[RMDB]
RNA sequence: GGGAACGACUCGAGUAGAGUCGAAAACGUCCAGAUUCGUCUGGACGAAAAAAACCUUUGUGGAUGUUGUCAGCUCACCACUGGUCCCAUUGGGACCAGGUGGCGAGCUUGGAUUUACAUCCACUCUGGUAAAAAGCGCUAAGUUCGCUUAGCGCAAGUAAUAUAGUUCGUUCGCGAACUAUAUUACAAAAGAAACAACAACAACAAC
Reactivity to 2A3 in 0.01 (KOAc 150mM, MgCl2 10mM, bicine 150mM(pH8.5), 24C), signal-to-noise 3, nucleotides 027 to 156: c020g000u010c000c000a010g000a020u030u100c180g060u020c110u030g000g000a000c000g010a050a010a000a000a000a000a010c000c010u010u020u010g000u000g010g000a000u000g000u010u000g010u010c010a000g010c000u010c000a030c000c000a020c010u010g020g020u020c050c000c010a300u190u300g020g000g000a000c000c010a010g040g090u000g000g010c020g000a000g000c000u000u050g000g000a000u160u120u250a000c000a000u000c000c000a000c000u000c000u000g000g010u070a120a090a030a050a010g000c000g000c000u000a010a000g020u070u120c170g120c100u000u000a000g000c000g000c010a000a010
Reactivity to DMS in 0.01 (KOAc 150mM, MgCl2 10mM, bicine 150mM(pH8.5), 24C), signal-to-noise 1, nucleotides 027 to 156: c050g020u000c010c010a020g000a040u000u000c280g000u000c000u000g030g020a000c000g010a000a000a030a100a020a070a030c020c010u020u010u000g030u000g010g010a020u000g010u000u000g040u000c010a100g010c000u000c010a020c000c000a040c010u000g020g000u010c000c050c010a300u010u000g050g070g000a030c000c000a030g010g000u010g140g040c010g010a010g010c000u010u010g070g010a040u000u000u000a040c000a130u000c000c000a000c000u000c010u010g000g010u000a060a060a040a150a110g010c000g020c010u000a020a000g010u010u000c300g030c010u000u010a000g020c000g020c010a000a030